[RMDB]
RNA sequence: GGGAACGACUCGAGUAGAGUCGAAAAGAAAAUCCCAAGCAUAGCAUAGCAUAGCAUAGCUUAGCAUAGCAUAGCAUAGCAUAGCAUAGCAUAGCAUAGCAUAGCAUAGCAUAGCAUACAAAAAAAACGCUAAUUAUACUUUCGAGUAUAAUUAGCGAAAAGAAACAACAACAACAAC
Reactivity to 2A3 in 0.01 (KOAc 150mM, MgCl2 10mM, bicine 150mM(pH8.5), 24C), signal-to-noise 2, nucleotides 027 to 126: g040a000a090a010a040u020c010c000c000a040a010g010c020a050u150a040g000c000a030u090a030g000c000a050u090a030g010c000a020u070a040g000c020u040u040a010g000c000a020u090a050g000c010a060u060a040g000c000a040u040a040g000c010a050u070a010g000c020a020u040a040g000c000a020u040a010g000c010a030u040a020g000c010a020u050a040g000c020a030u060a020g000c000a020u040a050g020c010a020u130a100c140a030a100a000a020a020a020a030a000
Reactivity to DMS in 0.01 (KOAc 150mM, MgCl2 10mM, bicine 150mM(pH8.5), 24C), signal-to-noise 2, nucleotides 027 to 126: g000a180a140a130a190u010c010c000c000a080a130g010c020a060u000a090g010c030a050u010a040g000c040a030u020a100g010c020a030u000a080g000c010u020u000a120g010c020a050u000a040g000c010a080u010a060g010c050a000u000a150g030c040a090u010a070g020c030a060u000a070g000c030a090u000a080g000c020a060u000a070g030c020a020u000a050g010c060a060u010a070g030c010a030u000a060g000c040a070u020a030c080a060a020a010a060a050a050a110a110
Chemical mapping of a 177-nucleotide RNA with 2A3 and DMS. For DMS, 1,642 sequencing reads were counted. The reactions ran in a buffer of 150 mM KOAc, 10 mM MgCl2 and 150 mM bicine (pH 8.5), at 24 C.